[RMDB]
RNA sequence: GGGAACGACUCGAGUAGAGUCGAAAAUAGCCUUCGGGCUAACCAUACCGUAGGAGCGAUAUCAAAGCGACGAUCGUACCUCCAAACUUCGAAAGAGGGUAGAGGUACGGGAGCUUUGUAAGUCGCUCCUAAACGGAUCGUUGAACUUCGGUUCAAAAGAUUACGUAAUUUUCGAAUUACGUAAUCUAAAAGAAACAACAACAACAAC
Reactivity to 2A3 in 0.01 (KOAc 150mM, MgCl2 10mM, bicine 150mM(pH8.5), 24C), signal-to-noise 2, nucleotides 027 to 156: u070a000g000c000c000u010u030c300g050g000g000c010u000a010a020c030c000a090u080a130c000c000g020u020a020g010g000a000g000c000g010a010u010a000u190c000a020a000a020g000c020g150a250c000g010a080u020c000g010u000a000c000c000u030c010c020a300a240a090c020u050u040c030g080a160a080a080g020a040g000g030g000u020a020g000a000g000g000u000a000c000g010g010g000a000g000c000u050u030u000g000u000a200a090g010u020c000g010c000u000c010c000u000a000a000a000c000g000g000a040u270c080g060u040u050g000a010a000c010u050u070c240g110g020u020u000c000a000a060a020
Reactivity to DMS in 0.01 (KOAc 150mM, MgCl2 10mM, bicine 150mM(pH8.5), 24C), signal-to-noise 3, nucleotides 027 to 156: u010a010g030c000c020u010u010c300g040g000g030c010u000a000a140c060c050a260u000a070c030c010g040u010a030g010g000a030g010c000g000a050u000a300u000c010a010a010a020g010c000g010a110c210g010a080u010c000g000u000a010c000c010u020c000c000a040a130a140c020u000u000c000g020a200a170a270g000a010g030g010g010u010a050g000a010g020g030u010a010c010g020g000g000a080g000c010u000u000u000g000u000a030a160g010u010c020g030c010u000c000c010u000a000a020a060c020g000g020a100u010c030g030u010u000g000a010a060c060u000u010c160g010g000u000u000c010a050a090a170